RNA sequence: GGGAACGACUCGAGUAGAGUCGAAAAUGAAUAACUGAAGUAAUAUCCACGGUCCUGAUCGUAAGAGCCGUCCAUCAAGAAAGCCGACCCCCAAUGUGUCAAGCUUGGUGUAGCUGUGAUGCUCGUAAGCAAAACAGUCGAGUUGGGAGCAUGGCUCCGCGUGCAAUAGAUUCGUCUAUUGCACGCGAAAAGAAACAACAACAACAAC
Reactivity to DMS in 0.01 (KOAc 150mM, MgCl2 10mM, bicine 150mM(pH8.5), 24C), signal-to-noise 1, nucleotides 027 to 156: u000g020a090a080u000a060a190c100u000g020a050a070g040u010a060a100u000a050u020c020c000a050c030g020g020u010c010c000u000g050a140u000c080g040u020a080a080g000a070g000c000c000g000u000c050c020a120u010c060a060a090g010a120a110a070g000c000c030g010a130c020c030c000c010c010a040a050u000g010u000g000u030c030a050a150g020c030u010u000g010g010u010g090u000a050g060c020u010g000u000g010a190u010g010c010u000c210g040u000a110a070g020c000a020a060a110a060c000a000g010u000c050g000a240g030u000u000g010g000g010a080g000c000a070u000g000g000c040u000c000
Reactivity to 2A3 in 0.01 (KOAc 150mM, MgCl2 10mM, bicine 150mM(pH8.5), 24C), signal-to-noise 1, nucleotides 027 to 156: u050g020a050a040u100a070a040c090u100g060a100a020g060u100a130a130u060a120u220c070c000a040c030g000g030u040c010c070u090g000a140u100c030g020u050a170a050g000a020g040c000c030g000u010c000c020a060u080c000a000a100g100a230a040a010g050c050c010g090a150c000c000c000c000c030a000a060u110g010u010g010u020c010a070a020g050c060u030u000g060g000u080g040u080a000g000c020u020g000u010g030a010u030g010c000u030c050g110u060a030a070g000c000a010a000a010a020c010a030g080u070c000g080a030g050u090u040g010g000g010a030g010c030a050u110g000g030c000u000c010